[RMDB]
RNA sequence: GGGAACGACUCGAGUAGAGUCGAAAAGAUAUGGACUGUGCUACUACGAUGAGCCUCAUUUCGGAAACGAAAUAGGCGAGUAGUAGCACAGUCCUAAGUCAAACUUAGCAUCUUCGGAUGCUAAGAACAUUAAGAGCCUCUUCGGAGGCUCUUAAUGAAAAGAAACAACAACAACAAC
Reactivity to DMS in 0.01 (KOAc 150mM, MgCl2 10mM, bicine 150mM(pH8.5), 24C), signal-to-noise 2, nucleotides 027 to 126: g010a060u000a300u010g010g000a030c000u000g010u000g030c000u000a000c000u000a030c000g000a180u010g010a300g010c000c000u000c300a010u000u000u000c000g010g000a120a130a160c020g000a010a010a000u000a010g000g000c000g000a070g000u000a000g000u000a000g030c000a010c000a000g000u000c000c000u000a010a060g000u000c030a090a120a300c020u000u000a000g000c000a000u000c010u000u030c210g020g000a010u000g020c000u010a000a000g000a190a170
This 177-nucleotide RNA was probed chemically with DMS. The reactions ran in a buffer of 150 mM KOAc, 10 mM MgCl2 and 150 mM bicine (pH 8.5), at 24 C.